[RMDB]
RNA sequence: GGGAACGACUCGAGUAGAGUCGAAAAGAUAUGGAUUCUGAGUGGCUAGAAGGUGAUCGGAAACGAUCACACUUCUUGGACCCACCAGAAUCCUAAGUCAAAACCGUAUACGCUUCGGCGUAUACGGGAUGUGUUUAUUGUUCGCAAUAAACACAUCAAAAGAAACAACAACAACAAC
Reactivity to DMS in 0.01 (KOAc 150mM, MgCl2 10mM, bicine 150mM(pH8.5), 24C), signal-to-noise 9, nucleotides 027 to 126: g000a020u000a200u010g010g000a010u000u000c000u000g010a180g030u000g000g000c130u000a040g010a010a010g010g010u000g000a010u000c000g020g000a050a030a090c000g010a010u000c000a010c000a050c000u000u000c000u000u010g020g000a180c300c000c000a010c000c000a020g000a010a010u000c000c000u000a000a060g000u000c020a140a080a100a300c000c000g010u000a000u000a000c000g000c000u000u010c270g020g000c000g020u000a000u000a000c010g000g000
Reactivity to 2A3 in 0.01 (KOAc 150mM, MgCl2 10mM, bicine 150mM(pH8.5), 24C), signal-to-noise 7, nucleotides 027 to 126: g010a000u020a020u060g000g000a000u010u010c010u020g080a090g210u010g010g040c150u190a080g010a010a010g010g000u010g000a000u000c010g000g010a030a010a010c010g000a010u000c000a000c010a020c000u010u010c000u000u020g230g110a110c010c000c000a000c000c000a000g000a000a000u000c000c000u000a010a000g010u010c010a030a010a080a170c010c000g000u000a000u000a010c010g020c010u050u110c300g220g000c000g000u000a000u000a000c000g000g000